Chemical mapping of a 177-nucleotide RNA with 2A3 and DMS. Source: RMDB library M2PK50, as collected in RNAgym. The reactions ran in a buffer of 150 mM KOAc, 10 mM MgCl2 and 150 mM bicine (pH 8.5), at 24 C.
RNA sequence: GGGAACGACUCGAGUAGAGUCGAAAAUGGACUGCGUUCGCGCAGUCCAAAAGAAUUGACGAACACUAGCGUAGAAGUGUUCAGGUCACAUAACUACGCAAAAAAGCUGAGUGUUCGCACUCAGCAACAAUUUGUGACACUUCGGUGUCACAAAUUGAAAAGAAACAACAACAACAAC
Reactivity to 2A3 in 0.01 (KOAc 150mM, MgCl2 10mM, bicine 150mM(pH8.5), 24C), signal-to-noise 1, nucleotides 027 to 126: u060g010g000a000c000u000g000c000g000u030u050c110g030c000g020c080a000g010u020c000c000a010a000a000a000g030a070a090u180u090g030a020c020g010a010a010c000a010c030u070a060g020c010g030u000a020g010a100a000g030u010g020u000u000c010a000g040g060u050c010a030c000a200u110a150a030c010u000a000c030g000c000a180a000a000a000a000a000g000c000u000g000a000g000u020g020u070u040c160g000c010a000c000u000c000a000g030c000a000a000
Reactivity to DMS in 0.01 (KOAc 150mM, MgCl2 10mM, bicine 150mM(pH8.5), 24C), signal-to-noise 2, nucleotides 027 to 126: u000g040g030a010c000u000g000c040g070u010u000c210g030c000g040c010a020g000u030c000c000a000a010a060a140g000a140a090u020u010g020a040c100g000a020a030c050a000c000u000a110g020c010g000u000a000g000a120a070g020u000g000u010u000c010a070g000g010u000c050a040c180a040u010a130a120c010u000a020c000g000c040a010a080a070a050a110a030g000c010u000g010a010g000u000g000u000u010c250g000c030a000c000u000c000a010g010c000a020a040